Conditions: 150 mM KOAc, 10 mM MgCl2 and 150 mM bicine (pH 8.5), 24 C. The record gives the reactivity of an RNA of 177 nucleotides to 2A3 and DMS. For 2A3, 789 sequencing reads were counted. For 2A3 the reverse transcriptase was SuperScript II with manganese. For DMS, 1,142 sequencing reads were counted.

[RMDB]
RNA sequence: GGGAACGACUCGAGUAGAGUCGAAAACGUGGUCGAUCCGCUGGGCGGCAUUAACACUCUGUGGCCGCUGUUUGGUAUUGCCAACCAGAUGCUGGCAGGGAUGGCGCUGAUGCUCUGUGCCGUGGUAACCCCUGCAUCGAUUCGUCGAUGCAGGGGUAAAAGAAACAACAACAACAAC
Reactivity to 2A3 in 0.01 (KOAc 150mM, MgCl2 10mM, bicine 150mM(pH8.5), 24C), signal-to-noise 1, nucleotides 027 to 126: c020g010u070g000g080u040c060g050a090u060c060c030g090c050u100g000g100g010c000g010g000c000a020u040u190a040a030c020a040c040u180c050u040g040u040g090g030c000c020g010c020u010g030u010u050u000g040g030u090a190u140u300g000c010c000a010a000c010c000a030g030a030u040g010c030u060g150g050c060a030g050g010g020a070u080g040g000c040g000c040u080g000a100u160g020c000u010c030u060g050u010g020c000c020g020u040g000g030u050a070
Reactivity to DMS in 0.01 (KOAc 150mM, MgCl2 10mM, bicine 150mM(pH8.5), 24C), signal-to-noise 1, nucleotides 027 to 126: c090g060u000g010g030u000c050g010a050u000c090c070g020c060u000g010g050g020c090g030g030c020a080u000u000a030a090c100a100c050u010c030u000g010u000g020g040c010c040g010c030u000g030u020u010u000g000g000u010a110u000u010g000c000c010a050a080c040c020a050g000a050u000g000c050u000g000g060c040a100g020g000g000a160u000g010g020c080g020c020u000g010a040u000g030c060u000c040u000g000u000g000c030c000g020u000g010g000u020a060